[RMDB]
RNA sequence: GGGAACGACUCGAGUAGAGUCGAAAAGUGAAGUGGCGAAGGAUUUGCGGCGCGCGAAGGAGGCAGCCGUGAGGGCGCGGAGAUUGUCACUGGCGCCGCAGCGGCUCUUGGCGAUGCUCAGCACCUACAUGGAGUCACCGUUCGCGGUGACUCCAUGAAAAGAAACAACAACAACAAC
Reactivity to DMS in 0.01 (KOAc 150mM, MgCl2 10mM, bicine 150mM(pH8.5), 24C), signal-to-noise 1, nucleotides 027 to 126: g000u000g000a050a110g020u020g000g030c050g010a110a070g000g000a140u010u010u000g040c040g010g000c070g020c090g000c090g020a020a070g040g030a110g050g040c200a050g060c030c010g010u000g020a270g000g000g000c070g000c040g000g000a040g000a190u000u000g000u020c110a090c040u000g020g000c010g030c020c040g010c000a160g000c040g000g000c010u000c020u000u000g000g040c020g000a050u020g030c020u000c050a140g000c030a070c020c010u010a100